Structure probing data (DMS) for a 177-nucleotide construct.
The DMS profile rests on 700 reads.
It was measured as part of the RMDB library OK2TST.
The reactions ran in a buffer of 150 mM KOAc, 10 mM MgCl2 and 150 mM bicine (pH 8.5), at 24 C.
RNA sequence: GGGAACGACUCGAGUAGAGUCGAAAAGCCUUUAUUUAUCACUGCCUGAUUUUGGGCUUUGAAGGCAAAUACCGUGUGAUGGAAGGGGGACAAGCUGAGCGCGAAAAAGUGAUCAGCCGCCUGCAUAUCCUUUUACCUGCUUCGGCAGGUAAAAGGAAAAAGAAACAACAACAACAAC
Reactivity to DMS in 0.01 (KOAc 150mM, MgCl2 10mM, bicine 150mM(pH8.5), 24C), signal-to-noise 1, nucleotides 027 to 126: g010c000c020u020u000u000a040u000u010u020a100u010c070a060c030u000g000c000c010u040g010a280u000u010u010u040g040g010g010c000u000u000u000g000a050a040g010g040c010a060a070a140u010a130c050c010g000u000g010u000g010a100u010g000g000a120a120g000g000g010g010g060a130c100a060a120g000c000u010g000a080g000c010g030c020g020a140a070a100a090a100g030u000g020a080u000c020a010g000c020c110g000c050c000u020g000c110a140u000a120